About this RNA
Chemical mapping of a 177-nucleotide RNA with DMS and 2A3. For DMS, 10,977 sequencing reads were counted. The RNA was probed in 150 mM KOAc, 10 mM MgCl2 and 150 mM bicine (pH 8.5) at 24 C. The data come from the RNA Mapping Database (RMDB), library OK2TST.
RNA sequence: GGGAACGACUCGAGUAGAGUCGAAAAAUCUACCAGAGAAGGUGAGCCCGCUGGUACUCAAGUGCAGUCUGGACGUGGCACACUUCCUGAGGGAGAAGAGCUGGGGUGAAGCCUUGAAACAUAUCGGCAUUUAGCAUUGGUUCGCCAAUGCUAAAUGAAAAGAAACAACAACAACAAC
Reactivity to DMS in 0.01 (KOAc 150mM, MgCl2 10mM, bicine 150mM(pH8.5), 24C), signal-to-noise 8, nucleotides 027 to 126: a090u010c050u010a130c050c010a100g010a130g010a050a030g010g020u000g000a100g020c010c000c010g020c020u000g010g010u000a030c030u000c050a220a140g010u010g020c110a030g020u000c020u000g000g010a110c050g020u010g030g010c010a120c020a050c020u000u010c010c020u000g010a180g000g010g000a060g010a060a080g000a070g010c050u000g010g000g010g020u000g010a090a120g010c030c030u000u000g010a080a070a090c120a060u000a070u000c120g000g010
Reactivity to 2A3 in 0.01 (KOAc 150mM, MgCl2 10mM, bicine 150mM(pH8.5), 24C), signal-to-noise 5, nucleotides 027 to 126: a010u050c030u040a080c010c000a020g030a010g020a140a020g070g060u020g010a020g020c010c000c010g030c020u010g000g020u140a050c020u030c070a210a170g110u060g150c050a020g030u040c010u030g100g020a200c050g080u260g020g000c020a010c000a000c060u020u020c000c000u040g020a150g010g040g000a050g020a080a030g000a010g000c040u040g020g010g000g040u060g050a050a010g020c010c020u040u050g060a070a060a010c060a040u140a040u130c030g060g000